The data come from the RNA Mapping Database (RMDB), library OK2TRN. An RNA of 177 nucleotides, treated with 2A3 and DMS and read out base by base. Reactivities are given for positions 27 through 126. For DMS the reverse transcriptase was MarathonRT. The RNA was probed in 150 mM KOAc, 10 mM MgCl2 and 150 mM bicine (pH 8.5) at 24 C.

RNA sequence: GGGAACGACUCGAGUAGAGUCGAAAAGAGUGUGAGAGAUGAGCGUGCAGAGCAGCCACAGCUUUGCCAUCUCCGCAGAGCAUCGCAUGUUCAGUCAGCAAAGGUCAGGGAAGGUGUUAGGCUGUGCGGUGGCUAAAGAGUUCGCUCUUUAGCCACCAAAAGAAACAACAACAACAAC
Reactivity to 2A3 in 0.01 (KOAc 150mM, MgCl2 10mM, bicine 150mM(pH8.5), 24C), signal-to-noise 2, nucleotides 027 to 126: g080a000g100u040g000u030g010a300g010a000g010a090u060g010a040g140c120g010u120g000c040a000g000a020g070c030a010g060c020c030a050c030a030g000c000u040u020u040g000c010c000a020u040c030u000c010c020g000c010a020g020a010g040c020a040u140c030g000c080a050u070g040u080u080c040a050g130u060c030a020g010c060a150a000a020g020g020u050c040a010g030g020g050a040a040g000g000u040g010u060u050a030g000g000c000u000g010u030g030c030
Reactivity to DMS in 0.01 (KOAc 150mM, MgCl2 10mM, bicine 150mM(pH8.5), 24C), signal-to-noise 3, nucleotides 027 to 126: g010a090g010u000g030u000g010a170g000a040g020a040u000g010a140g020c160g020u010g020c030a060g010a060g000c040a070g010c070c050a070c090a110g010c010u000u010u000g020c000c040a040u000c030u010c040c060g000c030a040g000a100g000c000a040u000c130g000c040a190u010g010u000u000c060a100g010u000c050a030g030c040a050a070a110g000g020u010c080a060g000g000g000a070a080g010g010u000g000u000u000a080g010g000c030u000g000u000g010c150